[RMDB]
RNA sequence: GGGAACGACUCGAGUAGAGUCGAAAAUUGCCUUUAUCCUAAGAGCAACAGAAAGCCAUGGAAUAUUUUUAAACAGGUGGUUGGCAGAGUAAGGAGAAAGGAAAGGGACAUAAUUAUAUUUGCAUUUCACGAAGAUCUUACUCUAUGGUGUGCAGAAUAUACCUAAGGCAUUCGUGCCUUAGGUAUAAAAAGAAACAACAACAACAAC
Reactivity to 2A3 in 0.01 (KOAc 150mM, MgCl2 10mM, bicine 150mM(pH8.5), 24C), signal-to-noise 2, nucleotides 027 to 156: u050u010g070c010c000u070u030u040a110u050c020c020u070a080a030g010a020g050c000a000a060c030a060g060a120a080a000g000c010c000a000u010g000g060a020a030u040a090u060u100u090u120u180a180a220a070c080a070g010g160u030g010g030u040u100g050g000c050a000g010a000g060u040a020a010g030g060a030g050a060a090a050g040g030a060a000a050g030g030g020a020c020a030u230a060a080u250u210a050u050a090u130u120u050g000c010a040u030u000u030c090a070c080g040a040a040g010a100u030c020u080u040a000c000u070c000u020a020u070g090g000u030g020u030g050c000a000g060a100a000
Reactivity to DMS in 0.01 (KOAc 150mM, MgCl2 10mM, bicine 150mM(pH8.5), 24C), signal-to-noise 1, nucleotides 027 to 156: u000u000g030c010c000u000u020u020a100u050c030c010u000a150a160g000a160g000c000a060a080c040a200g000a110a110a090g010c030c000a150u000g030g030a050a100u000a010u000u030u020u000u010a060a070a080c040a110g030g050u050g030g020u000u010g000g030c070a070g000a090g020u000a080a100g000g010a080g000a070a080a190g010g010a080a040a050g020g010g040a070c060a060u000a070a050u000u000a070u010a150u000u000u000g040c000a100u000u000u000c060a110c050g000a130a120g010a140u000c060u000u010a000c020u000c040u000a100u020g000g000u010g000u000g010c080a080g010a060a160
Chemical mapping of a 207-nucleotide RNA with 2A3 and DMS.
Source: RMDB library OK3TST, as collected in RNAgym.
For 2A3, 750 sequencing reads were counted.
The reactions ran in a buffer of 150 mM KOAc, 10 mM MgCl2 and 150 mM bicine (pH 8.5), at 24 C.
Reactivities are given for positions 27 through 156.